[RMDB]
RNA sequence: GGGAACGACUCGAGUAGAGUCGAAAAACGCUGAGAUACUACGUCAGCCGGAAGCCAUUAUGUGAGCCAGUCUUUAAGAUAAGCAAAUUUGUCUGCGACUAGGUGCGACUAGUGUUCAAGGAAGCACCAUCUUUCCCGAGUUCGCUCGGGAAAGAUGAAAAGAAACAACAACAACAAC
Reactivity to DMS in 0.01 (KOAc 150mM, MgCl2 10mM, bicine 150mM(pH8.5), 24C), signal-to-noise 8, nucleotides 027 to 126: a090c160g020c010u000g000a140g010a080u010a060c150u020a050c160g000u000c010a210g010c000c040g000g040a080a190g010c020c020a070u020u030a070u030g010u020g010a180g030c020c040a020g000u000c010u000u010u020a180a040g000a020u010a040a050g010c240a080a080a130u040u010u000g010u000c010u000g000c160g000a030c020u010a060g010g000u010g000c050g000a100c060u000a070g000u000g000u000u010c060a120a160g010g010a100a090g010c060a080c130
Reactivity to 2A3 in 0.01 (KOAc 150mM, MgCl2 10mM, bicine 150mM(pH8.5), 24C), signal-to-noise 6, nucleotides 027 to 126: a000c070g000c040u020g000a010g000a090u130a130c050u040a040c110g100u040c020a020g020c020c010g060g030a060a000g030c020c000a100u140u160a080u180g130u060g030a030g000c020c000a010g000u010c030u030u220u130a070a020g010a070u060a060a020g080c100a060a120a300u090u110u100g040u010c050u030g040c000g010a020c030u030a100g030g000u030g020c010g020a010c000u020a030g030u010g030u100u060c090a100a060g070g040a120a020g060c020a020c010
Record summary:
Chemical mapping of a 177-nucleotide RNA with DMS and 2A3. It was measured as part of the RMDB library OK1LIB. The DMS profile rests on 14,147 reads. For 2A3 the reverse transcriptase was SuperScript II with manganese. Reactivities are given for positions 27 through 126. For DMS the reverse transcriptase was MarathonRT. For 2A3, 4,292 sequencing reads were counted.